Record summary:
The data come from the RNA Mapping Database (RMDB), library M2RFPK. Chemical mapping of a 207-nucleotide RNA with 2A3 and DMS. 2A3 adducts were read by reverse transcription with SuperScript II with manganese. Conditions: 150 mM KOAc, 10 mM MgCl2 and 150 mM bicine (pH 8.5), 24 C.
[RMDB]
RNA sequence: GGGAACGACUCGAGUAGAGUCGAAAAUCCACUAUGAAUCUAGUCACUAAAUAAACACAAUUACCUACUGUGUGUAAUAGUGAGUGUUGAUAACACAAAAUAAUAGUAUAGUUUUGGAAGAUUAUACGCGCCCUUGCUCCGUUCGCGGAGCAAGGAACGGACCUAAAUAGUUCGCUAUUUAGGUCCGAAAAGAAACAACAACAACAAC
Reactivity to 2A3 in 0.01 (KOAc 150mM, MgCl2 10mM, bicine 150mM(pH8.5), 24C), signal-to-noise 3, nucleotides 027 to 156: u000c010c010a030c080u180a120u260g180a090a030u060c080u110a030g100u050c000a000c000u010a000a010a060u050a040a070a000c000a000c020a020a170u270u180a240c020c050u190a140c100u040g000u000g000u010g010u040a000a050u000a020g010u000g030a040g010u010g040u040u030g100a110u240a290a010c010a010c030a030a260a000a070u220a110a060u090a100g010u010a000u000a020g030u010u070u080u170g170g020a100a080g010a050u050u000a000u030a040c050g100c010g150c090c000c030u000u000g000c010u020c020c000g010u020u060c100g000c020g140g000a000g000c000a000a000g010g000a000a000
Reactivity to DMS in 0.01 (KOAc 150mM, MgCl2 10mM, bicine 150mM(pH8.5), 24C), signal-to-noise 1, nucleotides 027 to 156: u050c000c010a150c120u000a100u050g020a130a130u000c080u010a160g000u000c020a020c000u000a010a020a080u000a100a260a040c010a020c000a060a090u000u000a160c210c150u000a010c100u030g070u000g000u000g010u020a050a290u000a030g010u000g000a100g020u000g000u010u000g030a110u000a110a180c070a030c060a080a040a080a140u000a110a300u000a030g000u000a040u000a000g030u000u010u030u010g000g000a260a220g000a080u000u000a040u000a020c020g030c110g000c060c000c030u010u000g000c010u000c000c000g060u000u000c280g000c020g050g030a020g000c000a000a000g020g020a010a070